[RMDB]
RNA sequence: GGGAACGACUCGAGUAGAGUCGAAAACCAGUGGUAAUGUCAGUGCAAGAAGGAUAUUACCAUAGCACUGUCACGAGGGGAACGCAGUACCUUUUCAUCUAAACCUUUGCACGAGUAAUUAAAGAUCAUGGUAGUGCGGUUUCGACCGCACUACCAUAAAAGAAACAACAACAACAAC
Reactivity to 2A3 in 0.01 (KOAc 150mM, MgCl2 10mM, bicine 150mM(pH8.5), 24C), signal-to-noise 1, nucleotides 027 to 126: c000c000a000g020u020g000g020u020a050a000u000g070u050c030a030g020u000g240c060a180a060g090a070a150g230g000a010u010a040u050u000a000c000c000a000u000a000g000c010a000c070u000g000u060c000a010c000g000a040g000g000g030g020a000a000c080g000c030a000g040u090a180c000c000u000u000u030u160c130a130u020c000u090a000a010a170c000c000u000u000u010g000c000a000c000g070a000g090u060a000a000u300u070a130a100a000g010a000u110c000
Chemical mapping of a 177-nucleotide RNA with 2A3. Conditions: 150 mM KOAc, 10 mM MgCl2 and 150 mM bicine (pH 8.5), 24 C. Values are in units of 0.01, from 0 to 300, in steps of 10. The 2A3 profile rests on 597 reads. The data come from the RNA Mapping Database (RMDB), library RFM100. 2A3 adducts were read by reverse transcription with SuperScript II with manganese.